[RMDB]
RNA sequence: GGGAACGACUCGAGUAGAGUCGAAAAAGUUGCCAACGACGACAACUACGCUCUAGCUGCUUAAUGCGGCUAGCAGUCGCUAGGGGAUGCCUGUAAACCCGAAACGACUGUCAGAUAGAACAGGAUCGCCGCCAAGUUCGCUGUAGACGUAACGGCUGAACGAGUAAGUGUUCGCACUUACUCGUUCAAAAGAAACAACAACAACAAC
Reactivity to DMS in 0.01 (KOAc 150mM, MgCl2 10mM, bicine 150mM(pH8.5), 24C), signal-to-noise 1, nucleotides 027 to 156: a120g060u000u000g000c020c040a070a100c170g070a120c020g000a030c010a040a040c040u000a050c070g040c110u010c010u010a030g000c000u000g010c010u020u020a100a130u000g030c000g050g000c010u000a010g040c040a060g010u000c040g020c000u000a300g000g050g000g000a170u010g000c110c120u000g000u010a110a150a240c040c020c010g000a070a120a000c000g020a040c000u010g040u000c170a130g010a090u010a140g000a060a060c030a110g000g000a070u010c120g010c020c000g030c000c040a100a140g000u000u030c010g040c030u000g010u010a050g010a110c070g000u000a160a190c050g000g000c010u000
Reactivity to 2A3 in 0.01 (KOAc 150mM, MgCl2 10mM, bicine 150mM(pH8.5), 24C), signal-to-noise 2, nucleotides 027 to 156: a000g020u010u000g060c030c010a080a080c140g170a020c070g020a020c020a070a010c020u150a050c100g040c090u010c000u020a020g020c010u020g020c010u060u270a130a030u300g010c000g000g000c010u010a000g020c000a000g010u000c000g020c070u010a010g000g000g010g000a000u060g020c000c000u020g030u060a070a060a110c000c000c000g000a030a010a000c000g000a000c000u000g060u050c010a020g050a210u160a050g020a050a000c000a010g030g020a100u100c040g000c010c000g000c000c000a080a000g000u030u090c060g000c150u130g070u250a040g000a010c010g020u000a010a000c010g000g000c000u010